[RMDB]
RNA sequence: GGGAACGACUCGAGUAGAGUCGAAAAAGGGACACCUCACUCACAUUUUACCAACAGAGUGAGACUGAGGUUAACGUCUCAUUUCUGUUGGUGAACGCAGAAGUUAGAGGUUGAGAACACUGACAACUGCGUUCAUAGUUGUGAGUGUUCUGUCCCAGUAUGCUGGAUCGUUCGCGAUCCAGCAUACAAAAGAAACAACAACAACAAC
Reactivity to 2A3 in 0.01 (KOAc 150mM, MgCl2 10mM, bicine 150mM(pH8.5), 24C), signal-to-noise 2, nucleotides 027 to 156: a000g000g010g000a000c010a000c000c000u000c000a000c000u000c000a000c000a020u180u200u060u090a020c000c000a020a020c000a000g000a020g020u010g000a000g000a000c000u020g040a090g300g000u210u140a020a040c050g000u000c000u000c000a020u230u300u030c000u000g000u000u000g000g020u000g000a000a000c000g000c020a000g000a070a000g060u010u080a060g060a140g130g120u020u040g090a070g060a120a020c070a000c030u010g000a000c000a030a020c010u020g020c000g000u060u010c010a030u060a060g120u030u030g000u000g000a000g000u000g010u000u000c010u030g000u000c000c000c000a000
The record gives the reactivity of an RNA of 207 nucleotides to 2A3. The reactions ran in a buffer of 150 mM KOAc, 10 mM MgCl2 and 150 mM bicine (pH 8.5), at 24 C. The data come from the RNA Mapping Database (RMDB), library OK3TST. 2A3 adducts were read by reverse transcription with SuperScript II with manganese. For 2A3, 890 sequencing reads were counted.